[RMDB]
RNA sequence: GGGAACGACUCGAGUAGAGUCGAAAAGAUAUGGAUCCCUGGUGACUUCGAGGAUCUAGCUCGGAAACGAGCUAGGGAGAAGGCCACAUGGGAUCCUAAGUCAAACGUGAAUGUUCGCAUUCACGAACAGUCAACAUUACUUCGGUAAUGUUGACUGAAAAGAAACAACAACAACAAC
Reactivity to 2A3 in 0.01 (KOAc 150mM, MgCl2 10mM, bicine 150mM(pH8.5), 24C), signal-to-noise 3, nucleotides 027 to 126: g030a020u090a050u170g000g000a000u020c000c030c020u080g300g030u050g090a050c000u010u020c010g060a300g010g000a010u000c010u010a000g000c000u000c000g000g040a100a120a080c000g010a000g000c000u000a000g000g000g000a020g010a020a020g020g070c190c000a040c010a070u060g000g000g000a010u000c000c000u000a080a000g050u030c110a140a030a070c020g010u000g000a000a000u020g040u070u110c300g000c140a000u000u010c000a000c010g010a040a010
Reactivity to DMS in 0.01 (KOAc 150mM, MgCl2 10mM, bicine 150mM(pH8.5), 24C), signal-to-noise 4, nucleotides 027 to 126: g010a050u000a300u010g010g010a010u000c000c000c010u000g030g050u000g000a300c000u000u000c010g010a100g020g000a030u000c000u000a010g000c000u000c000g000g000a090a140a240c000g000a020g010c020u000a000g000g000g000a030g000a020a010g000g010c110c000a020c040a200u000g000g000g020a010u000c010c010u000a020a070g010u000c020a110a120a300c030g010u000g090a000a000u000g000u010u020c280g020c020a010u000u000c010a000c000g010a120a190